[RMDB]
RNA sequence: GGGAACGACUCGAGUAGAGUCGAAAAAUGUGGUCCUUCGGGACCACAUGGACUACUCCCACCUUAUAGAGUAGGGAGGAAGGUGGAAAAUAAAAAUAAAAAUGACCCCCCCUUUCGAGGGGGGGAAUUAGGAAAUGAUAUUCGUAUCAUUUCCUAAAAAAGAAACAACAACAACAAC
Reactivity to 2A3 in 0.01 (KOAc 150mM, MgCl2 10mM, bicine 150mM(pH8.5), 24C), signal-to-noise 1, nucleotides 027 to 126: a010u000g000u000g010g010u030c010c020u030u080c170g100g020g000a010c000c000a000c010a000u020g020g000a010c000u030a020c010u000c020c020c000a020c010c000u150u210a190u170a200g100a010g050u140a170g080g000g070a000g030g120a020a030g020g050u070g020g060a050a070a140a100u170a080a160a080a040a000u240a030a210a130a020a000u060g020a080c000c000c000c000c000c000c000u010u020u020c160g080a010g000g000g080g020g020g000g050a000a000
Reactivity to DMS in 0.01 (KOAc 150mM, MgCl2 10mM, bicine 150mM(pH8.5), 24C), signal-to-noise 2, nucleotides 027 to 126: a000u010g020u000g010g010u010c000c000u000u010c160g040g010g000a000c000c000a000c000a000u000g000g000a110c030u010a070c030u010c000c020c000a050c030c020u020u010a120u000a110g010a100g030u000a100g030g010g010a060g030g010a020a030g000g010u010g010g000a100a070a060a060u000a030a050a060a070a120u040a030a030a040a100a130u010g000a220c020c010c000c000c000c010c000u000u000u010c150g010a000g020g000g020g000g010g000g000a000a000